[RMDB]
This 207-nucleotide RNA was probed chemically with 2A3. The RNA was probed in 150 mM KOAc, 10 mM MgCl2 and 150 mM bicine (pH 8.5) at 24 C. It was measured as part of the RMDB library M2RFPK.

RNA sequence: GGGAACGACUCGAGUAGAGUCGAAAAGCUUUUUUUUCGGAUUAGGCGUGGAGGCGAAAGUCACCCUCCUCGCAGCGCAAGUUCGUGCUUGCGACUUACACGUAGGGCGAGGGGUGGGCGAAAGUUGAAAACACGAUGUUGUUCGCAACAUCGUGAAGUAAAAAUAAACCUUCGGGUUUAUUUUUACAAAAGAAACAACAACAACAAC
Reactivity to 2A3 in 0.01 (KOAc 150mM, MgCl2 10mM, bicine 150mM(pH8.5), 24C), signal-to-noise 2, nucleotides 027 to 156: g000c000u080u130u100u020u000u060u110u300c090g040g000a020u020u180a050g060g000c000g020u020g000g000a000g000g060c130g100a210a040a100g180u160c040a050c020c000c000u000c030c000u000c000g000c000a010g000c000g000c000a000a030g010u100u230c060g100u300g120c000u020u000g010c000g030a050c010u020u040a010c110a000c070g080u090a010g000g000g070c100g020a070g030g010g010g020u120g070g000g000c020g090a090a040a000g000u010u040g000a080a000a000a000c000a000c000g000a000u000g000u000u000g030u030u030c120g020c120a000a000c000a000u020c000g000u000g010a010a000